[RMDB]
RNA sequence: GGGAACGACUCGAGUAGAGUCGAAAACUCGACAACAGGACCACGAUCUCGUUCGGCGUGUACACCCUGGAGGAUGUACGGGUGGCCUUCGCUUUGAGUUUCGCCUUCUUCCUGGGUGUCGUGGUGAGACAAUCGGCAUGUUCGCAUGCCGAUUGUCAAAAGAAACAACAACAACAAC
Reactivity to DMS in 0.01 (KOAc 150mM, MgCl2 10mM, bicine 150mM(pH8.5), 24C), signal-to-noise 2, nucleotides 027 to 126: c040u010c060g030a080c040a020a060c080a070g000g000a080c070c050a040c030g010a060u000c080u000c010g050u000u020c090g010g010c020g030u000g000u060a140c010a000c000c000c010u000g050g000a040g000g000a060u000g040u020a060c180g000g000g020u000g000g000c200c030u000u000c070g030c170u020u010u010g000a080g000u000u000u000c030g010c040c010u000u000c030u020u010c000c000u000g010g000g000u000g000u020c020g010u000g000g000u000g000a180
Reactivity to 2A3 in 0.01 (KOAc 150mM, MgCl2 10mM, bicine 150mM(pH8.5), 24C), signal-to-noise 2, nucleotides 027 to 126: c000u000c010g050a020c010a180a010c020a020g140g000a030c010c020a020c040g040a060u050c040u010c060g070u210u090c080g100g010c060g040u040g030u040a020c010a000c020c000c020u060g020g040a020g060g050a140u100g050u250a050c090g010g030g000u000g030g000c010c000u180u110c100g080c170u040u120u220g010a040g010u060u040u070c040g000c030c010u040u040c010u000u040c010c020u020g090g000g020u000g000u000c000g000u010g010g050u040g030a160
Annotation: Structure probing data (DMS and 2A3) for a 177-nucleotide construct. 2A3 adducts were read by reverse transcription with SuperScript II with manganese. For DMS, 1,854 sequencing reads were counted. For 2A3, 2,276 sequencing reads were counted.